This 177-nucleotide RNA was probed chemically with DMS and 2A3. The data come from the RNA Mapping Database (RMDB), library OK2TRN.
[RMDB]
RNA sequence: GGGAACGACUCGAGUAGAGUCGAAAAGCCGGGGCAAGAAACACACAGCCUUCUCUUCCAAGGGCCUCAGUGAUGAAGAGUACGAUGAGUACAAGAGAAUCAGAGAGGAGAGGAAUGGCAAAUACUCUAAUCAAUAUGGCUUCGGCCAUAUUGAUUAAAAAGAAACAACAACAACAAC
Reactivity to DMS in 0.01 (KOAc 150mM, MgCl2 10mM, bicine 150mM(pH8.5), 24C), signal-to-noise 3, nucleotides 027 to 126: g030c030c030g030g000g010g000c130a100a130g000a050a060a050c060a050c130a080c120a140g010c020c020u000u000c030u010c050u010u000c030c130a110a090g000g020g000c060c010u010c020a080g020u000g010a070u000g000a110a110g010a170g020u000a010c030g010a120u000g020a300g020u010a000c010a060a110g000a090g020a100a050u000c020a060g000a200g010a040g000g030a080g010a080g000g010a030a090u000g020g000c070a060a060a070u000a070c090u000c070
Reactivity to 2A3 in 0.01 (KOAc 150mM, MgCl2 10mM, bicine 150mM(pH8.5), 24C), signal-to-noise 2, nucleotides 027 to 126: g070c020c000g000g020g000g040c050a050a010g070a150a230a020c080a000c010a000c090a060g030c000c000u020u060c040u020c010u040u030c030c010a050a070g150g090g000c000c000u030c010a080g070u050g090a040u030g060a090a080g030a000g040u010a010c030g030a050u250g050a030g000u010a040c000a000a030g080a020g060a130a000u030c050a030g070a010g000a030g120g010a020g000a030g020g040a040a060u120g030g010c060a070a030a000u070a060c020u060c030
For DMS the reverse transcriptase was MarathonRT.